[RMDB]
RNA sequence: GGGAACGACUCGAGUAGAGUCGAAAAGCAAAGAAAUUUUAUCCCAAUAAGGCGAAGUAAGCAAGUCGACCCAACGCGAGGGCGCAAGCGAGCUUACGAGCCCUAGCAGACUAAUAGCGAGAAAAAAGUAGAGUUAUCAGUUCGCUGAUAACUCUACAAAAGAAACAACAACAACAAC
Reactivity to 2A3 in 0.01 (KOAc 150mM, MgCl2 10mM, bicine 150mM(pH8.5), 24C), signal-to-noise 3, nucleotides 027 to 126: g040c030a000a100a110g210a030a210a060u120u150u040u060a140u080c000c010c000a000a060u110a040a000g000g000c010g020a060a020g030u010a020a000g000c020a030a000g030u060c020g070a300c000c010c020a140a180c070g050c080g180a190g010g010g000c000g000c040a030a010g080c010g020a010g000c000u000u000a000c000g000a000g000c020c010c000u000a010g020c020a020g040a110c020u070a090a140u050a170g050c060g050a050g050a090a080a020a020a020a000
Reactivity to DMS in 0.01 (KOAc 150mM, MgCl2 10mM, bicine 150mM(pH8.5), 24C), signal-to-noise 3, nucleotides 027 to 126: g000c120a070a030a090g010a110a080a110u020u000u000u000a120u000c000c010c010a090a100u000a050a130g000g000c000g020a070a150g000u000a010a050g020c040a060a230g020u010c010g010a140c040c000c010a100a100c080g010c190g030a060g000g000g000c040g030c250a050a150g020c020g000a290g010c000u000u000a000c020g000a290g000c020c000c020u000a070g030c060a080g000a120c130u020a060a070u000a050g010c060g000a110g000a000a050a080a040a060a160
This 177-nucleotide RNA was probed chemically with 2A3 and DMS.
Conditions: 150 mM KOAc, 10 mM MgCl2 and 150 mM bicine (pH 8.5), 24 C.
The data come from the RNA Mapping Database (RMDB), library M2PK90.
2A3 adducts were read by reverse transcription with SuperScript II with manganese.